[RMDB]
RNA sequence: GGGAACGACUCGAGUAGAGUCGAAAAGCUGCACAUCGGUGGGGGAGGUGAAGGUCUUGCCGAACCAGCGGGCCUUUUCCAACUGCCCGUUCAUCUUGUGACCGGUGUCGAACUCACCGCCCUUCCACUGCCCCGAUGAGUUCGCUCAUCGGGGCAGAAAAGAAACAACAACAACAAC
Reactivity to 2A3 in 0.01 (KOAc 150mM, MgCl2 10mM, bicine 150mM(pH8.5), 24C), signal-to-noise 1, nucleotides 027 to 126: g010c000u030g000c000a020c000a300u200c030g000g010u080g010g040g000g000g000a090g050g000u080g060a090a000g020g040u000c020u150u300g050c000c000g060a050a080c000c000a010g010c000g030g000g000c000c030u080u020u020u020c010c060a110a080c040u110g010c010c010c010g010u080u020c000a110u000c000u100u250g040u050g140a180c000c000g000g000u040g000u030c090g000a030a000c000u000c020a000c000c010g040c000c020c000u160u010c040c040a060
An RNA of 177 nucleotides, treated with 2A3 and read out base by base. The RNA was probed in 150 mM KOAc, 10 mM MgCl2 and 150 mM bicine (pH 8.5) at 24 C.